[RMDB]
Chemical mapping of a 207-nucleotide RNA with 2A3. The 2A3 profile rests on 1,033 reads. The RNA was probed in 150 mM KOAc, 10 mM MgCl2 and 150 mM bicine (pH 8.5) at 24 C.

RNA sequence: GGGAACGACUCGAGUAGAGUCGAAAACAGAACCUUCGGGUUCUGAAAAAUCCUAAGUCAUCAAUGACGGGUCGGAAGCAACAGCCUAUCGGAAACGAUAGGACAUGCUUGCGACCUAAGACAGAUGAUAUGGAAAAAAGCAGUCUUCGGACUGCAACCCCUUGUAAUCCUUCGGGAUUACAAGGGGAAAAGAAACAACAACAACAAC
Reactivity to 2A3 in 0.01 (KOAc 150mM, MgCl2 10mM, bicine 150mM(pH8.5), 24C), signal-to-noise 2, nucleotides 027 to 156: c020a000g010a020a000c000c000u040u050c150g150g000g000u000u000c000u000g000a000a010a010a000a000u060c030c010u050a150a020g030u000c000a000u000c010a040a300u060g030a060c020g000g000g000u000c010g000g110a000a000g000c000a000a100c040a200g060c000c000u010a020u000c010g080g020a120a080a020c020g000a030u000a020g000g000a050c000a010u030g010c000u000u060g040c010g000a000c000c000u000a000a010g000a000c000a000g010a000u020g000a010u050a080u160g000g070a080a060a070a040a070a010g010c040a000g010u060c000u040u170c230g130g020a000c000u000g000c000a030a040